[RMDB]
RNA sequence: GGGAACGACUCGAGUAGAGUCGAAAACAAGUACCUUUCAGUAGGAAAGCGGCUCGUCGGGAAUGUCAGCAAAGGUAUUCGGGGCAAUCUCCCGGAGCUGCCAGAGCAACUCACUUGCCAACUCCCGCGUAGGAUACAUAUUCGUAUGUAUCCUACGAAAAGAAACAACAACAACAAC
Reactivity to 2A3 in 0.01 (KOAc 150mM, MgCl2 10mM, bicine 150mM(pH8.5), 24C), signal-to-noise 9, nucleotides 027 to 126: c020a020a020g040u110a130c010c000u060u080u110c170a280g180u110a020g040g060a100a040a010g010c010g020g000c000u020c030g250u070c020g070g000g020a040a040u020g010u030c020a060g050c120a250a060a060g210g030u160a180u120u180c060g050g000g000g000c000a030a120u050c050u010c070c010c000g000g000a000g000c010u010g000c000c010a020g000a010g040c030a030a120c030u020c030a020c020u020u020g020c010c000a060a060c050u010c010c010c010g000
Reactivity to DMS in 0.01 (KOAc 150mM, MgCl2 10mM, bicine 150mM(pH8.5), 24C), signal-to-noise 8, nucleotides 027 to 126: c050a040a050g010u010a250c040c020u000u010u010c210a150g010u010a040g010g010a070a150a130g010c050g010g010c020u000c020g010u010c040g020g000g010a050a070u000g010u000c040a080g010c090a040a060a090g000g020u010a110u010u010c090g020g000g000g000c040a040a060u010c170u000c000c000c000g010g000a020g000c030u000g010c020c050a050g000a140g010c100a070a070c080u000c050a060c040u000u000g010c030c040a080a130c170u000c010c010c010g020